[RMDB]
Chemical mapping of a 177-nucleotide RNA with DMS. In probing experiments dimethyl sulfate is read out at A N1 and C N3, which are open when not base-paired. The RNA was probed in 150 mM KOAc, 10 mM MgCl2 and 150 mM bicine (pH 8.5) at 24 C. Source: RMDB library OK2TST, as collected in RNAgym.
RNA sequence: GGGAACGACUCGAGUAGAGUCGAAAAUGGCUGCUUCAUCACUGAGCGCCAAUUCGGUAUUUGCCUGCAAAGGCUGCGGGUGAUAAAUGCGAGGUAUGCGCAUGAGUUGUUUGAGCCCUGAAACGAAGAUAUUCGUGAUCUUCGGAUCACGAAUAUCAAAAGAAACAACAACAACAAC
Reactivity to DMS in 0.01 (KOAc 150mM, MgCl2 10mM, bicine 150mM(pH8.5), 24C), signal-to-noise 3, nucleotides 027 to 126: u000g000g010c020u000g030c020u000u000c060a070u010c160a100c210u000g000a060g030c010g000c010c020a040a190u010u010c060g000g000u000a090u000u000u000g010c000c000u000g000c120a040a130a160g030g000c070u000g020c030g010g040g000u000g010a050u010a060a120a050u010g010c020g000a100g020g000u010a060u020g000c070g000c020a040u000g000a110g000u000u000g000u010u010u000g020a170g010c010c010c010u000g010a040a070a160c090g010a120a050

Values cover nucleotides 27 to 126.